RNA sequence: GGGAACGACUCGAGUAGAGUCGAAAAGAUAUGGAUUGUCUCCAGGACACGAAGAACUAGAUCGGAAACGAUCUAGGGAGUGUUAGGAGAGCAAUCCUAAGUCAAAAGGUACGCUUCGGCGUACCAACCAAAGUACCAAGUUCGCUUGGUACUUUGGAAAAGAAACAACAACAACAAC
Reactivity to DMS in 0.01 (KOAc 150mM, MgCl2 10mM, bicine 150mM(pH8.5), 24C), signal-to-noise 4, nucleotides 027 to 126: g000a070u000a300u010g010g010a020u000u000g010u010c010u000c000c010a170g000g000a010c010a000c000g010a150a170g020a120a190c020u000a010g000a010u000c000g030g000a130a130a210c000g010a010u000c000u000a000g000g000g000a060g000u000g010u010u010a150g000g000a030g010a080g020c010a010a000u000c010c000u000a030a080g000u000c060a080a090a160a110g010g000u000a000c000g020c010u000u010c230g020g000c000g020u000a000c000c010a040a110
Reactivity to 2A3 in 0.01 (KOAc 150mM, MgCl2 10mM, bicine 150mM(pH8.5), 24C), signal-to-noise 4, nucleotides 027 to 126: g040a010u090a040u180g000g000a010u000u000g030u020c000u000c010c050a140g300g030a010c010a010c030g300a300a090g010a050a010c010u010a020g000a010u000c000g000g000a050a070a050c010g010a000u000c010u010a000g000g000g020a040g000u000g000u020u020a020g030g010a020g040a010g010c010a000a000u000c000c000u010a120a020g080u030c010a090a000a000a140g000g020u000a000c010g000c000u070u170c300g130g000c000g000u000a000c000c000a000a000